Notes: Structure probing data (2A3 and DMS) for a 177-nucleotide construct. Values are in units of 0.01, from 0 to 300, in steps of 10. The RNA was probed in 150 mM KOAc, 10 mM MgCl2 and 150 mM bicine (pH 8.5) at 24 C. DMS adducts were read by reverse transcription with MarathonRT.
RNA sequence: GGGAACGACUCGAGUAGAGUCGAAAAUGCAGGAUACCAGACCGGGUAUGUGCGUGCGCUCUUUUACUAUCUUGCAGUUAUGGAACCAGGCCACUUCUAUCUUGGCGUGCUCAAUGAGGAGCGUGGCAUCACUGCCGGGAUUCGUCCCGGCAGUGAUAAAAGAAACAACAACAACAAC
Reactivity to 2A3 in 0.01 (KOAc 150mM, MgCl2 10mM, bicine 150mM(pH8.5), 24C), signal-to-noise 3, nucleotides 027 to 126: u060g010c020a040g020g060a000u000a120c060c000a020g040a060c000c130g050g020g060u090a070u200g030u050g040c100g000u040g030c000g020c010u030c000u030u040u000u030a130c110u070a010u050c030u050u010g070c000a040g000u090u110a100u220g070g070a040a010c000c040a060g050g020c000c010a010c000u080u060c010u030a250u010c000u000u070g010g010c040g130u120g020c010u000c050a040a000u200g000a010g040g000a000g010c060g060u000g000g020c020
Reactivity to DMS in 0.01 (KOAc 150mM, MgCl2 10mM, bicine 150mM(pH8.5), 24C), signal-to-noise 2, nucleotides 027 to 126: u010g000c070a090g020g030a100u010a030c050c110a120g000a150c120c020g030g000g010u000a030u010g020u020g000c000g040u000g000c030g000c010u000c020u010u010u030u060a220c220u020a030u020c030u000u000g000c020a030g030u040u010a110u060g000g030a020a160c100c040a050g060g000c010c010a050c050u000u060c020u030a060u020c050u010u010g000g000c030g000u010g000c070u000c020a100a040u040g020a100g000g000a000g020c120g060u010g010g020c060